An RNA of 207 nucleotides, treated with 2A3 and DMS and read out base by base. 2A3 adducts were read by reverse transcription with SuperScript II with manganese.
RNA sequence: GGGAACGACUCGAGUAGAGUCGAAAAUGGCCGGCAACGCCGACAAUGUGAAGCUGUGGGACGGCGCGGACGUCCUGAUCUUCACCGGUGCAGGUGAACCGUCGUCGACGGCGACACCCCCAACCCUGCCCGCAACGAUCACCGACGACUGGCCGACCUAUCUGGGAUGAUUCGUCAUCCCAGAUAGAAAAGAAACAACAACAACAAC
Reactivity to 2A3 in 0.01 (KOAc 150mM, MgCl2 10mM, bicine 150mM(pH8.5), 24C), signal-to-noise 1, nucleotides 027 to 156: u110g050g020c030c020g010g030c050a140a030c030g030c000c000g050a050c070a080a110u140g010u020g000a020a000g000c080u070g030u170g100g020g070a000c040g010g030c070g020c070g290g090a010c010g000u020c000c010u010g010a020u030c000u010u010c000a000c010c000g000g000u090g000c020a040g000g000u050g060a060a050c060c050g000u010c000g050u070c120g060a120c090g010g020c010g080a010c050a300c000c030c000c020c010a010a040c030c000c000u000g040c000c000c000g050c030a080a090c050g010a020u080c020a010c110c000g040a030c010g080a100c010u000g010g000c010c010g000a010c000
Reactivity to DMS in 0.01 (KOAc 150mM, MgCl2 10mM, bicine 150mM(pH8.5), 24C), signal-to-noise 1, nucleotides 027 to 156: u000g020g070c020c010g040g050c020a110a070c000g020c000c010g000a130c030a110a230u000g050u000g010a050a110g000c100u010g010u000g030g010g030a100c000g000g030c040g010c140g000g010a150c000g010u030c010c030u020g000a000u000c040u000u000c020a100c030c010g000g000u000g050c000a190g000g020u000g020a140a020c100c000g040u000c020g040u000c040g030a130c190g000g010c020g010a090c030a140c000c020c010c000c030a120a070c090c000c020u000g010c000c000c010g020c040a080a040c090g000a140u000c020a090c060c030g000a060c020g020a050c000u000g010g020c020c000g000a150c050

Conditions: 150 mM KOAc, 10 mM MgCl2 and 150 mM bicine (pH 8.5), 24 C.